[RMDB]
RNA sequence: GGGAACGACUCGAGUAGAGUCGAAAACGCAAAACAGUGAGUGGACGGAACAAAUCCCCUUCCCACCUCCCCACUGUCCACUCACUGUCUUCCUAAGAGGAAAUAUAAAUCGGGGGUGGGAAGGGGAGAGCAUCCUACCGUUCGCGGUAGGAUGCUCAAAAGAAACAACAACAACAAC
Reactivity to 2A3 in 0.01 (KOAc 150mM, MgCl2 10mM, bicine 150mM(pH8.5), 24C), signal-to-noise 2, nucleotides 027 to 126: c150g000c060a120a100a000a000c000a000g020u000g000a000g020u000g010g020a000c010g040g000a130a000c010a060a050a080u070c000c010c000c000u000u000c000c000c000a010c030c000u030c030c080c020c010a060c050u020g020u000c000c000a010c000u010c000a000c000u000g000u000c000u010u000c000c000u010a080a050g040a070g220g180a040a090a000u300a080u080a030a050a080u250c160g000g000g000g000g000u000g000g000g000a000a000g000g000g000g000a000